[RMDB]
RNA sequence: GGGAACGACUCGAGUAGAGUCGAAAAGAUAUGGACACGUUCUUUUGACGGCAUGUCGGAAACGACCUCUGCCGAUAAGAACAGUGUCCUAAGUCAAAACAUCAACAUCGUUCGCGAUGUUGAUGAACUUCUACAGUAGCUUCGGCUACUGUAGAAGAAAAGAAACAACAACAACAAC
Reactivity to 2A3 in 0.01 (KOAc 150mM, MgCl2 10mM, bicine 150mM(pH8.5), 24C), signal-to-noise 3, nucleotides 027 to 126: g010a010u070a050u180g020g010a000c010a020c020g030u010u010c000u060u170u100u230g270a120c010g000g000c020a020u270g010u000c010g000g020a070a080a060c010g010a000c000c000u010c010u010g000c010c000g000a010u020a000a010g000a000a000c110a030g010u000g000u000c000c000u000a060a000g040u010c030a040a030a060a160c000a000u000c000a000a000c010a000u020c010g080u100u060c270g010c010g160a000u000g010u000u020g000a010u000g000a000a000
Reactivity to DMS in 0.01 (KOAc 150mM, MgCl2 10mM, bicine 150mM(pH8.5), 24C), signal-to-noise 3, nucleotides 027 to 126: g010a030u010a300u010g000g000a010c000a000c000g000u000u000c000u000u000u010u000g010a220c270g010g010c000a010u010g010u000c020g010g000a130a100a180c010g000a000c010c000u000c000u000g000c000c000g010a020u010a000a000g020a010a020c010a100g050u000g000u000c000c000u000a020a090g010u000c020a090a080a160a200c010a000u000c000a010a010c000a000u000c000g010u000u020c200g030c010g010a000u000g020u000u000g000a000u000g010a040a120